[RMDB]
RNA sequence: GGGAACGACUCGAGUAGAGUCGAAAAUUACAUAAGUCUAACACCUUGUUUCGGACUAACAAGGGCGCAUGGAGGAUGGCCGGACCUCCAUAGUUAGACGUCCGAGAACCAGCCGAAGGGAAAAAGACGUAUUAGGCAGUUUCGACUGCCUAAUACGAAAAGAAACAACAACAACAAC
Reactivity to 2A3 in 0.01 (KOAc 150mM, MgCl2 10mM, bicine 150mM(pH8.5), 24C), signal-to-noise 4, nucleotides 027 to 126: u220u120a070c090a080u160a140a040g000u000c010u010a020a000c000a020c000c000u000u010g020u040u080u110c230g140g040a140c090u030a000a020c000a000a000g020g010g010c090g020c030a000u010g020g000a000g020g010a020u100g030g000c000c000g030g040a090c000c000u000c000c000a000u000a000g010u000u010a000g000a010c010g020u000c030c010g100a090g000a120a040c020c000a010g010c000c000g050a060a070g070g030g020a000a080a050a010a000g130a050
Reactivity to DMS in 0.01 (KOAc 150mM, MgCl2 10mM, bicine 150mM(pH8.5), 24C), signal-to-noise 3, nucleotides 027 to 126: u020u030a100c130a140u030a070a150g000u000c010u020a010a020c030a160c000c000u000u010g010u000u000u010c100g050g010a080c100u050a030a030c010a000a020g010g020g010c210g020c230a050u010g010g020a010g020g000a050u040g010g030c010c000g030g000a190c000c020u000c000c010a000u000a040g060u000u010a010g000a000c000g020u010c060c040g020a120g010a060a130c020c020a110g000c060c020g000a060a060g020g000g000a020a060a090a110a030g000a170
Chemical mapping of a 177-nucleotide RNA with 2A3 and DMS. It was measured as part of the RMDB library OK1LIB. For 2A3 the reverse transcriptase was SuperScript II with manganese.